[RMDB]
RNA sequence: GGGAACGACUCGAGUAGAGUCGAAAAGCCAAAUGCAAUCAUAUUGGUUUGGUACUAAUUAUGGUAGAAUUAAAGCUAAGCCAAUUUGGGCACCGGGUUUCAUCUCUCCUCGACUGAAGCCCCUCACCUAUGUCUUUUUCUUCGGAAAAAGACAUAGAAAAGAAACAACAACAACAAC
Reactivity to DMS in 0.01 (KOAc 150mM, MgCl2 10mM, bicine 150mM(pH8.5), 24C), signal-to-noise 2, nucleotides 027 to 126: g000c000c030a050a100a100u010g040c040a120a070u000c010a020u030a140u000u000g010g020u000u000u000g010g040u010a190c290u000a010a030u000u000a080u010g010g020u000a100g000a030a040u020u020a030a140a300g000c010u000a010a020g000c010c000a010a040u020u000u000g020g010g000c030a080c300c290g000g010g000u000u000u000c010a050u000c060u000c040u000c040c080u000c110g010a050c180u000g000a090a080g000c010c000c010c140u000c150a120c140
Reactivity to 2A3 in 0.01 (KOAc 150mM, MgCl2 10mM, bicine 150mM(pH8.5), 24C), signal-to-noise 2, nucleotides 027 to 126: g090c010c000a060a030a050u150g000c040a040a120u130c000a050u030a000u080u000g000g000u010u000u000g010g000u040a030c050u020a050a100u090u090a100u290g210g050u170a120g090a260a030u010u040a030a020a020g010c010u000a000a000g000c000c000a000a010u040u000u000g030g010g030c000a010c060c040g040g030g020u010u000u010c020a050u020c020u000c000u040c070c050u020c010g010a020c040u040g020a000a000g000c020c000c000c010u020c020a080c010